[RMDB]
RNA sequence: GGGAACGACUCGAGUAGAGUCGAAAAGGAGGUCGCGACUUCGUUCCGAAGCGUCCCAGUACCAUACCUCAAUGCCAUACAUGGUGUGUGCCUGUACGAGUGCUAGAUAAAAAGUUCUCAGUACUUGUCACAGGCGGAGAUUCGUCUCCGCCUGUGAAAAAGAAACAACAACAACAAC
Reactivity to DMS in 0.01 (KOAc 150mM, MgCl2 10mM, bicine 150mM(pH8.5), 24C), signal-to-noise 2, nucleotides 027 to 126: g000g020a050g000g000u040c140g030c050g030a070c020u020u000c090g060u050u000c080c020g000a040a160g010c020g000u020c010c090c050a250g000u010a080c140c060a070u010a170c010c000u040c010a060a140u020g000c000c020a000u000a060c170a090u120g000g000u000g010u000g030u030g000c000c010u000g010u000a010c000g020a060g010u000g000c020u060a050g000a090u040a010a070a060a110a060g010u010u010c030u010c080a110g000u000a000c020u000u050g000
Reactivity to 2A3 in 0.01 (KOAc 150mM, MgCl2 10mM, bicine 150mM(pH8.5), 24C), signal-to-noise 3, nucleotides 027 to 126: g140g000a050g000g070u050c030g000c010g050a080c050u030u020c040g120u210u070c050c110g030a040a000g010c010g040u050c030c010c020a000g010u060a090c030c040a040u060a090c020c000u000c010a030a110u110g020c020c010a040u090a050c070a080u270g010g010u050g000u010g030u050g020c000c010u060g030u060a010c010g000a000g010u030g020c020u050a060g040a230u230a170a230a050a030a010g100u050u020c000u010c010a010g000u020a030c000u020u070g040